[RMDB]
RNA sequence: GGGAACGACUCGAGUAGAGUCGAAAAGCCGCACCCUUCUUCGCUGCCUUCCUCUUCACACGCUUCACACGCCCCGGGCGGCCGUUGCCGAACGGUGAGGCGUCAGCGAAGGCAAUGUGAUGCUCGGCGCAUUUAGCAGGUUCGCCUGCUAAAUGCGAAAAGAAACAACAACAACAAC
Reactivity to DMS in 0.01 (KOAc 150mM, MgCl2 10mM, bicine 150mM(pH8.5), 24C), signal-to-noise 2, nucleotides 027 to 126: g000c020c000g000c020a220c010c060c030u010u000c010u000u000c010g000c050u000g010c110c050u010u050c010c060u000c230u000u030c050a020c080a090c040g060c000u000u060c050a000c000a010c080g030c130c090c150c020g000g000g030c030g020g000c060c190g040u020u030g000c000c000g020a070a110c010g000g020u000g030a030g030g020c170g020u000c010a080g070c170g010a050a080g000g000c020a080a120u010g000u000g000a070u000g010c050u000c000g030g000
Reactivity to 2A3 in 0.01 (KOAc 150mM, MgCl2 10mM, bicine 150mM(pH8.5), 24C), signal-to-noise 4, nucleotides 027 to 126: g030c010c000g000c030a100c020c010c000u070u040c000u000u020c010g040c040u040g030c000c000u040u040c010c010u060c040u170u120c060a030c010a010c080g020c000u020u030c000a050c020a040c080g050c010c010c000c020g010g060g000c010g000g000c010c060g180u100u300g040c030c030g000a040a020c040g020g030u080g030a050g030g000c000g020u030c010a020g020c020g050a020a000g020g000c010a030a160u100g020u060g040a030u060g030c050u020c040g040g000
Conditions: 150 mM KOAc, 10 mM MgCl2 and 150 mM bicine (pH 8.5), 24 C.
This 177-nucleotide RNA was probed chemically with DMS and 2A3.
For DMS the reverse transcriptase was MarathonRT.
It was measured as part of the RMDB library OK1LIB.